[RMDB]
RNA sequence: GGGAACGACUCGAGUAGAGUCGAAAAGACGAAAGAAAACACAUUGAAAGUGGGAUGACAAUUGAGCAGAUGGUCGCGCGGGUUCACGCAUUAUUUGAGCACAAAGACGUCGCCUAUAACGUCGUUCUCCUUCCAGAUGGUUCGCCAUCUGGAAGGAAAAAGAAACAACAACAACAAC
Reactivity to DMS in 0.01 (KOAc 150mM, MgCl2 10mM, bicine 150mM(pH8.5), 24C), signal-to-noise 2, nucleotides 027 to 126: g000a130c110g000a110a100a040g010a080a080a060a120c070a060c110a130u030u020g000a070a050a130g040u000g010g010g030a060u020g010a110c080a100a110u030u000g030a040g030c050a020g000a070u000g000g010u020c130g050c090g010c070g000g040g020u000u000c050a050c050g010c020a080u010u000a080u000u000u000g000a090g020c040a050c090a010a070a140g000a080c080g000u000c040g010c040c030u000a060u010a050a160c160g010u000c000g000u000u000c020
Reactivity to 2A3 in 0.01 (KOAc 150mM, MgCl2 10mM, bicine 150mM(pH8.5), 24C), signal-to-noise 1, nucleotides 027 to 126: g060a010c020g040a040a070a040g150a000a120a050a020c040a010c030a080u100u290g090a190a060a000g090u050g010g060g010a050u050g000a020c030a040a100u020u090g010a040g000c040a020g070a140u050g060g040u090c040g000c000g000c000g010g030g020u090u020c040a020c020g020c000a020u060u000a070u050u190u100g080a040g060c010a020c020a070a130a000g040a040c020g010u020c000g010c030c000u090a120u020a130a010c050g020u030c000g020u060u010c000